Record summary: This 177-nucleotide RNA was probed chemically with 2A3 and DMS. For DMS the reverse transcriptase was MarathonRT. The reactions ran in a buffer of 150 mM KOAc, 10 mM MgCl2 and 150 mM bicine (pH 8.5), at 24 C. For DMS, 2,307 sequencing reads were counted. It was measured as part of the RMDB library OK1LIB. Values cover nucleotides 27 to 126.
[RMDB]
RNA sequence: GGGAACGACUCGAGUAGAGUCGAAAACAAUGGCCCGGCGGGCGUUUCGGCUUCACCGGUGUCGUAGACCGCGACGAUUGCAGGGUGGUUCAAUGCCGCGGCGUUUUGCGCCUCACGCCGGAAGCGAACCCAGCAAACUGUUCGCAGUUUGCUGGGUAAAAGAAACAACAACAACAAC
Reactivity to 2A3 in 0.01 (KOAc 150mM, MgCl2 10mM, bicine 150mM(pH8.5), 24C), signal-to-noise 2, nucleotides 027 to 126: c010a040a130u160g060g000c000c000c000g020g030c000g010g000g000c010g000u010u010u120c020g010g000c010u170u160c000a000c020c010g050g010u090g020u010c000g000u030a050g030a170c080c030g030c020g020a040c000g030a040u080u190g030c050a120g160g000g030u050g000g020u140u140c110a090a090u070g000c000c000g050c020g040g030c030g020u010u010u120u150g110c050g040c000c030u060c000a070c010g020c010c010g000g010a090a040g010c020g010a010
Reactivity to DMS in 0.01 (KOAc 150mM, MgCl2 10mM, bicine 150mM(pH8.5), 24C), signal-to-noise 1, nucleotides 027 to 126: c140a100a050u060g010g060c020c010c000g000g000c020g000g080g010c070g000u020u030u020c030g010g020c040u000u010c030a020c000c000g000g010u060g000u000c030g000u000a010g000a100c040c090g010c010g010a030c010g000a030u010u040g030c020a080g040g000g000u020g010g020u050u010c190a040a070u000g000c030c040g020c100g010g000c000g040u010u010u010u000g040c090g000c040c030u040c090a080c010g000c090c000g000g000a190a160g040c090g000a100